An RNA of 177 nucleotides, treated with 2A3 and read out base by base. The reactions ran in a buffer of 150 mM KOAc, 10 mM MgCl2 and 150 mM bicine (pH 8.5), at 24 C. For 2A3 the reverse transcriptase was SuperScript II with manganese.
[RMDB]
RNA sequence: GGGAACGACUCGAGUAGAGUCGAAAAUGUAUGCAUGUAGCGUACGUUGGCAAAGUGCCGAACGUACGCAAUCCUCUUUACCGAAUCGGACGAUCCCGACCAUUUCAUCUUCUUCGAAACGUUCCAGGUCUCUCGAGACUUUCGAGUCUCGAGAGACAAAAGAAACAACAACAACAAC
Reactivity to 2A3 in 0.01 (KOAc 150mM, MgCl2 10mM, bicine 150mM(pH8.5), 24C), signal-to-noise 4, nucleotides 027 to 126: u150g040u100a050u140g070c080a030u100g090u210a000g020c000g000u000a000c000g000u010u010g000g000c040a150a200a210g210u210g100c040c020g080a010a010c000g000u000a000c000g000c010a000a010u030c000c000u030c010u040u070u030a080c070c010g070a060a050u030c020g030g000a020c020g020a040u020c000c000c000g000a010c000c020a040u030u010u060c020a050u010c010u050u000c000u020u020c020g000a020a040a020c000g020u020u010c010c030a030g060